[RMDB]
RNA sequence: GGGAACGACUCGAGUAGAGUCGAAAAAAGGAAGGAGAGACUGUUUCUACAGGUGUCAUACAAAAAUCAAUACUGAGCCAAGGAUUAUUGGAUCCCAUAGAACCACGGAGACUUGGUAGUGAAAUUCGAGGAAGAUAUUGUUCGCAAUAUCUUCCUCAAAAGAAACAACAACAACAAC
Reactivity to 2A3 in 0.01 (KOAc 150mM, MgCl2 10mM, bicine 150mM(pH8.5), 24C), signal-to-noise 6, nucleotides 027 to 126: a010a000g150g030a060a040g050g030a090g000a010g010a030c040u040g040u020u070u030c060u070a030c050a070g000g050u040g070u060c030a040u050a180c120a070a120a010a010a010u080c030a030a060u050a170c050u090g020a000g040c000c030a050a030g030g010a070u050u070a040u110u100g080g020a040u050c030c010c010a030u090a140g080a050a050c010c000a020c050g110g020a050g030a060c020u030u010g020g040u050a090g040u040g120a040a130a160u110u180c100
Reactivity to DMS in 0.01 (KOAc 150mM, MgCl2 10mM, bicine 150mM(pH8.5), 24C), signal-to-noise 6, nucleotides 027 to 126: a090a050g030g000a070a080g000g010a070g010a090g000a120c060u010g010u000u020u010c030u010a090c080a060g010g010u010g000u000c060a040u000a090c170a020a050a040a080a080u020c070a040a060u020a060c080u000g010a080g000c020c010a060a070g010g010a070u000u000a090u010u010g010g000a080u000c020c020c050a090u030a070g010a080a080c040c020a040c080g000g000a140g000a120c040u000u000g000g010u000a090g000u000g010a060a060a080u020u010c150

Structure probing data (2A3 and DMS) for a 177-nucleotide construct. The reactions ran in a buffer of 150 mM KOAc, 10 mM MgCl2 and 150 mM bicine (pH 8.5), at 24 C. DMS adducts were read by reverse transcription with MarathonRT.